[RMDB]
RNA sequence: GGGAACGACUCGAGUAGAGUCGAAAAUAUUCAGAUACGCCCUGUGUGUAUAUGGAAGGCAUGGAAUCUAAGCAGGUCGAUUAUGUCCCAUUGAGAAGCGCUACAUGCAUCACAAGAUGCAAUUUAGCAUUAGGGAUGGAUUCGUCCAUCCCUAAUGAAAAGAAACAACAACAACAAC
Reactivity to DMS in 0.01 (KOAc 150mM, MgCl2 10mM, bicine 150mM(pH8.5), 24C), signal-to-noise 9, nucleotides 027 to 126: u010a080u000u000c050a060g000a090u000a040c080g010c020c030c150u010g020u010g020u000g010u000a040u000a050u000g000g010a070a070g010g010c090a070u010g010g010a080a060u010c060u000a070a110g010c060a040g010g000u000c040g010a120u000u010a070u010g010u000c000c000c010a170u010u010g010a130g010a090a110g010c110g000c020u000a030c200a090u000g000c000a010u000c000a090c300a090a100g010a010u000g010c010a030a060u000u000u000a050g010
Reactivity to 2A3 in 0.01 (KOAc 150mM, MgCl2 10mM, bicine 150mM(pH8.5), 24C), signal-to-noise 7, nucleotides 027 to 126: u060a030u030u090c020a000g030a070u060a100c030g020c010c030c060u050g080u030g010u020g020u060a040u010a040u180g080g030a050a070g090g000c040a020u060g040g060a110a040u050c060u090a120a000g030c010a010g030g040u050c030g030a050u060u060a050u180g060u020c000c010c010a010u060u160g090a110g020a100a030g040c030g010c080u020a030c020a070u040g020c000a000u000c020a050c050a140a060g010a010u020g000c000a020a060u060u090u080a040g020
Annotation
The data come from the RNA Mapping Database (RMDB), library OK2TRN. This 177-nucleotide RNA was probed chemically with DMS and 2A3. 2A3 adducts were read by reverse transcription with SuperScript II with manganese. Reactivities are given for positions 27 through 126.